RNA sequence: GGGAACGACUCGAGUAGAGUCGAAAACGGCAGUGGCAUCGGUAUGUAACCUAAGGUAUCUGCGGGCGACGUUUAAGCGUCGUCGCAGAUACGCUACUUCUCUAGGUCGUGUAGCGUGAUGCUAUGGUCUAGUCAUGGUCUUCGGGCCAUGGCUAGAAAAAGAAACAACAACAACAAC
Reactivity to DMS in 0.01 (KOAc 150mM, MgCl2 10mM, bicine 150mM(pH8.5), 24C), signal-to-noise 7, nucleotides 027 to 126: c060g000g010c070a090g010u000g000g010c010a020u000c020g000g020u010a030u020g010u010a090a050c020c020u000a060a060g000g010u000a000u000c000u000g000c000g020g020g010c000g010a010c000g010u000u030u060a110a170g010c000g010u000c000g010u000c000g000c000a000g000a000u000a000c000g010c070u000a070c100u020u020c000u020c090u010a040g000g000u010c030g010u010g010u000a030g000c030g010u000g020a000u000g010c010u000a040u010g000g010
Reactivity to 2A3 in 0.01 (KOAc 150mM, MgCl2 10mM, bicine 150mM(pH8.5), 24C), signal-to-noise 9, nucleotides 027 to 126: c010g070g010c040a040g030u020g030g000c000a020u030c010g020g020u050a020u050g080u020a040a030c000c010u020a060a020g090g000u000a000u000c000u000g000c000g040g050g020c000g000a000c000g010u020u060u220a200a020g050c000g000u000c000g000u000c000g000c000a000g000a000u000a000c000g000c000u030a050c020u130u070c010u000c020u040a020g000g000u020c010g010u020g010u040a020g050c030g020u000g030a000u050g000c000u010a020u050g030g010

The record gives the reactivity of an RNA of 177 nucleotides to DMS and 2A3. For 2A3, 46,804 sequencing reads were counted. For 2A3 the reverse transcriptase was SuperScript II with manganese. High 2A3 reactivity points to a flexible backbone, as in loops and unpaired stretches.